[RMDB]
RNA sequence: GGGAACGACUCGAGUAGAGUCGAAAAGAUAUGGAUACUAUGAAGAGGAUUCCAACAGCUCGGAAACGAGACAUGGAAAUCUUGGAGUAUCCUAAGUCAAACCUUCGGCUGUUCGCAGCCGAAGGAACAGAGCUAAACAGUUCGCUGUUUAGCUCUGAAAAGAAACAACAACAACAAC
Reactivity to DMS in 0.01 (KOAc 150mM, MgCl2 10mM, bicine 150mM(pH8.5), 24C), signal-to-noise 3, nucleotides 027 to 126: g020a030u000a300u010g000g010a010u000a000c000u000a180u000g010a120a110g010a000g010g010a090u000u000c000c000a040a060c250a160g020c000u010c010g030g000a110a080a170c010g000a010g000a030c100a150u000g000g000a010a030a040u000c000u000u000g000g000a000g010u010a000u000c000c000u000a030a070g010u000c000a090a090a170c020c000u000u000c000g010g010c000u000g030u000u000c170g000c020a000g000c000c000g000a000a000g010g010a040a060
Reactivity to 2A3 in 0.01 (KOAc 150mM, MgCl2 10mM, bicine 150mM(pH8.5), 24C), signal-to-noise 3, nucleotides 027 to 126: g000a020u070a040u120g010g000a000u000a000c030u050a210u300g090a060a060g020a020g140g060a150u020u020c000c010a070a040c080a170g050c010u000c010g010g050a050a040a020c010g000a000g040a020c030a090u090g010g030a060a070a080u020c000u010u030g050g020a020g010u000a000u000c000c000u000a130a020g040u040c040a100a040a170c000c000u000u000c000g010g000c010u020g060u120u100c300g000c180a000g000c010c000g000a000a000g000g000a010a000
Conditions: 150 mM KOAc, 10 mM MgCl2 and 150 mM bicine (pH 8.5), 24 C. An RNA of 177 nucleotides, treated with DMS and 2A3 and read out base by base. Reactivities are given for positions 27 through 126. It was measured as part of the RMDB library TTRDEL. The 2A3 profile rests on 4,054 reads. DMS adducts were read by reverse transcription with MarathonRT.